[RMDB]
RNA sequence: GGGAACGACUCGAGUAGAGUCGAAAAGAUAUGGACUCACGUAGCCAUAUCUGUAUGUAGCGUAUGCAUCGGAAACGAUGUGCAUACGCGCAGAUAUACAGAGUAUGGCUACGUGAGUCCUAAGUCACCUUGAGUAUGUCUUCGGACAUACUCAAGGAAAAGAAACAACAACAACAAC
Reactivity to DMS in 0.01 (KOAc 150mM, MgCl2 10mM, bicine 150mM(pH8.5), 24C), signal-to-noise 3, nucleotides 027 to 126: g000a040u000a300u000g020g020a010c010u000c000a000c030g000u000a020g000c000c000a000u000a060u010c000u000g000u000a010u000g030u000a120g030c000g030u010a000u000g010c010a030u000c000g010g010a170a110a300c040g020a040u010g020u000g030c020a000u000a010c000g050c000g020c210a090g000a070u000a060u000a000c000a010g010a070g010u010a010u000g000g000c030u000a000c000g020u000g000a000g030u000c000c000u000a010a070g000u000c030a230